[RMDB]
RNA sequence: GGGAACGACUCGAGUAGAGUCGAAAAGGAUUAUGACAGGCCCAUCCCCCUGGACCUCUCAUAGUGCCCCAUGCCAGAGCAAACUGUGGCCCCGAACCAUUGCCUGGCUUCUGUACCCGUGGGCCACAGGCCUCGGUAGCUUCGGCUACCGAGGCCUAAAAGAAACAACAACAACAAC
Reactivity to 2A3 in 0.01 (KOAc 150mM, MgCl2 10mM, bicine 150mM(pH8.5), 24C), signal-to-noise 1, nucleotides 027 to 126: g000g040a070u170u000a010u070g020a000c000a000g000g000c000c000c010a030u080c030c000c000c010c000u000g000g000a000c000c000u060c000u000c030a000u080a010g020u180g120c000c010c000c010a020u060g000c000c000a020g030a020g000c000a000a000a190c070u050g000u000g010g000c060c020c000c000g080a120a040c040c010a140u040u060g000c000c000u000g010g000c110u100u050c030u080g040u060a060c000c000c000g050u110g000g000g020c000c000a000c010
Structure probing data (2A3) for a 177-nucleotide construct. Values cover nucleotides 27 to 126. The RNA was probed in 150 mM KOAc, 10 mM MgCl2 and 150 mM bicine (pH 8.5) at 24 C. For 2A3 the reverse transcriptase was SuperScript II with manganese. It was measured as part of the RMDB library RFM100.